[RMDB]
RNA sequence: GGGAACGACUCGAGUAGAGUCGAAAAUACAGGUCACCACCAGGACUGGAACAGAUUUCAGAGGCCGUGCAGGUUUCAUCUGGGGCAACGUGCCAAAGUGCAGAGCGUGGGCAGCGGGAGGCCCUGCCUCCCCUCUUCCCUUCGGGGAAGAGGGGAGAAAAGAAACAACAACAACAAC
Reactivity to 2A3 in 0.01 (KOAc 150mM, MgCl2 10mM, bicine 150mM(pH8.5), 24C), signal-to-noise 2, nucleotides 027 to 126: u120a020c030a010g050g020u030c020a000c060c000a030c010c010a010g000g060a040c030u040g040g020a050a020c030a100g100a190u070u150u150c040a030g020a030g110g000c050c010g030u060g040c110a040g000g040u070u080u070c020a050u060c030u040g000g010g040g020c030a080a030c050g040u050g040c010c020a130a160a050g090u090g010c030a020g030a030g070c030g000u040g000g050g000c010a030g070c020g030g010g020a040g010g060c030c020c000u000g020c010
Reactivity to DMS in 0.01 (KOAc 150mM, MgCl2 10mM, bicine 150mM(pH8.5), 24C), signal-to-noise 4, nucleotides 027 to 126: u010a110c110a060g010g000u000c040a100c050c010a110c040c030a060g000g000a080c060u000g010g000a100a100c070a100g000a080u000u000u020c060a100g020a110g000g010c020c030g010u010g010c130a110g000g010u000u010u000c050a040u000c040u000g000g010g000g010c060a060a080c130g010u000g000c030c050a050a080a120g010u010g010c070a030g000a090g020c060g010u000g020g010g010c050a060g020c060g000g000g010a110g010g010c030c010c030u010g010c110